[RMDB]
RNA sequence: GGGAACGACUCGAGUAGAGUCGAAAAACCAGCUACAAUUUUAGCUGGUAGUGUCUACACUAAUAGCUGCCUUGUAUCGUCUGAUGGACAACCUGGCGGUGAUGCUAUUAGUUUGAGUUUUAAUAACCAGCUUAAGAUUCUUCGGAAUCUUAAGCUGAAAAGAAACAACAACAACAAC
Reactivity to 2A3 in 0.01 (KOAc 150mM, MgCl2 10mM, bicine 150mM(pH8.5), 24C), signal-to-noise 2, nucleotides 027 to 126: a000c000c000a000g020c000u030a020c110a300a300u070u150u170u100a030g000c000u000g040g010u010a010g020u030g050u060c010u040a060c030a000c020u010a000a000u000a000g010c040u060g000c000c010u040u050g090u070a210u160c070g060u000c040u100g240a120u300g090g020a010c000a000a010c000c030u000g000g000c000g010g040u070g060a010u190g000c000u030a000u010u000a000g000u020u050u100g030a020g000u040u130u070u110a120a130u060a000a050c030
Reactivity to DMS in 0.01 (KOAc 150mM, MgCl2 10mM, bicine 150mM(pH8.5), 24C), signal-to-noise 2, nucleotides 027 to 126: a030c000c000a000g010c000u000a020c300a150a120u020u020u000u000a000g030c010u010g000g010u010a010g010u010g020u010c010u000a120c150a050c010u000a010a000u000a010g010c000u000g020c020c010u000u000g000u000a080u010c240g010u000c000u000g050a180u020g020g000a010c040a060a050c020c020u000g000g000c000g020g000u000g010a040u000g010c000u000a000u010u000a010g010u000u000u020g010a090g000u000u000u000u000a090a080u010a090a170c270
Structure probing data (2A3 and DMS) for a 177-nucleotide construct. The RNA was probed in 150 mM KOAc, 10 mM MgCl2 and 150 mM bicine (pH 8.5) at 24 C. It was measured as part of the RMDB library 15KREP. Values cover nucleotides 27 to 126. 2A3 is a SHAPE reagent: it acylates the 2'-hydroxyl of flexible nucleotides of all four kinds.